[RMDB]
This 177-nucleotide RNA was probed chemically with DMS and 2A3. 2A3 is a SHAPE reagent: it acylates the 2'-hydroxyl of flexible nucleotides of all four kinds. It was measured as part of the RMDB library VIROID. In probing experiments dimethyl sulfate is read out at A N1 and C N3, which are open when not base-paired. For 2A3, 2,465 sequencing reads were counted.

RNA sequence: GGGAACGACUCGAGUAGAGUCGAAAAAGCAAUGGCGGAGUCCUAGGCACCACAGCUCCGCGUGAUGUCCGAGCAAUGGCAGAGUCCUAGGCAUCACACAUCUUCGGGCGAUGCAGAUGGCGGCUAGCCACUCUAAGGGGUUCGCCCCUUAGAGUGGAAAAGAAACAACAACAACAAC
Reactivity to DMS in 0.01 (KOAc 150mM, MgCl2 10mM, bicine 150mM(pH8.5), 24C), signal-to-noise 3, nucleotides 027 to 126: a090g000c110a090a120u000g010g010c000g010g000a050g010u000c050c060u020a130g020g010c040a200c000c030a100c150a250g000c010u000c010c020g000c020g000u000g000a020u000g000u000c020c060g020a040g000c090a080a060u010g010g030c050a180g000a120g000u010c020c000u000a120g000g000c010a010u000c010a020c020a120c110a080u000c060u000u010c100g000g010g040c070g010a080u010g010c010a050g010a070u010g000g000c040g000g010c040u000a070g010
Reactivity to 2A3 in 0.01 (KOAc 150mM, MgCl2 10mM, bicine 150mM(pH8.5), 24C), signal-to-noise 2, nucleotides 027 to 126: a020g090c100a070a050u080g040g010c020g000g020a020g040u090c040c030u040a050g070g000c050a020c040c010a040c010a030g010c000u020c030c000g030c030g000u000g020a030u040g020u020c020c020g000a010g000c060a050a150u300g060g000c140a140g090a020g300u120c000c000u010a000g000g000c000a010u030c000a010c000a000c000a060u030c010u150u110c030g080g040g010c030g030a030u120g020c020a010g000a080u050g060g000c010g010g030c050u020a050g050